[RMDB]
Structure probing data (2A3) for a 207-nucleotide construct. Reactivities are rounded to 0.1 and cut off at 0 and 3. The 2A3 profile rests on 1,379 reads.
RNA sequence: GGGAACGACUCGAGUAGAGUCGAAAACAGAGUUACUUCCGGAUGGGAAAGCAUGCCAUGAUGACCCAUCCGAAACGUACGCGCAGCAUGCGAAAGGAUGGGUCCACGGCGGUUAUAAUAUGGAUGGGAAAGCAUGCUCGCGACUGGUCUUGUAAGCCUCUCAAGCUAUAUUCGUAUAGCUUGAGAGAAAAGAAACAACAACAACAAC
Reactivity to 2A3 in 0.01 (KOAc 150mM, MgCl2 10mM, bicine 150mM(pH8.5), 24C), signal-to-noise 3, nucleotides 027 to 156: c000a000g040a060g090u120u080a060c000u050u020c010c020g050g050a070u090g060g010g020a020a150a010g040c060a050u120g060c030c010a060u130g070a150u180g010a030c000c000c000a000u000c000c030g000a030a010a000c040g050u100a050c040g010c020g020c070a060g020c020a060u040g030c020g070a110a020a010g010g000a010u000g000g010g000u010c030c000a000c020g040g000c050g000g000u080u070a110u050a140a210u120a070u140g050g030a040u020g010g000g050a080a050a000g010c020a000u020g010c000u000c020g020c000g000a020c000u050g000g060u030c000u030u040g050u230a030a090g000c010